This 177-nucleotide RNA was probed chemically with 2A3 and DMS. Reactivities are given for positions 27 through 126. The RNA was probed in 150 mM KOAc, 10 mM MgCl2 and 150 mM bicine (pH 8.5) at 24 C. 2A3 adducts were read by reverse transcription with SuperScript II with manganese. For DMS, 5,424 sequencing reads were counted.
[RMDB]
RNA sequence: GGGAACGACUCGAGUAGAGUCGAAAAUUAGGUGCAGCAUCCGCAGCACGGUGCGUCCUCACACCGGCCCCGUGCGUUGACCGACAGCACCGCUCCGGAGUUGGUGCGGAUGGUCACUGCGCCAUGCAACUAUAUGGUCCUUCGGGACCAUAUAGUUAAAAGAAACAACAACAACAAC
Reactivity to 2A3 in 0.01 (KOAc 150mM, MgCl2 10mM, bicine 150mM(pH8.5), 24C), signal-to-noise 2, nucleotides 027 to 126: u130u050a060g000g000u010g000c000a020g000c000a030u010c020c030g040c050a030g010c000a010c010g000g000u100g040c090g020u180c020c000u060c020a140c020a040c030c020g020g000c030c010c000c010g000u010g030c010g010u030u120g030a030c020c010g030a020c040a030g050c010a030c020c010g020c040u120c060c080g210g030a040g020u160u150g020g020u020g000c020g000g010a050u060g010g000u050c050a000c030u010g000c000g000c000c010a000u060g020c020
Reactivity to DMS in 0.01 (KOAc 150mM, MgCl2 10mM, bicine 150mM(pH8.5), 24C), signal-to-noise 5, nucleotides 027 to 126: u010u010a100g030g030u000g000c010a030g000c060a070u010c030c040g020c040a300g010c020a070c020g000g010u010g010c120g000u020c020c040u000c130a120c180a110c210c140g000g000c010c020c020c030g010u000g000c020g000u000u010g010a040c020c010g010a090c100a110g000c050a050c020c010g000c050u000c080c110g000g010a080g020u000u000g030g010u000g010c000g000g000a080u000g000g000u000c110a200c030u000g010c000g020c010c020a070u010g000c150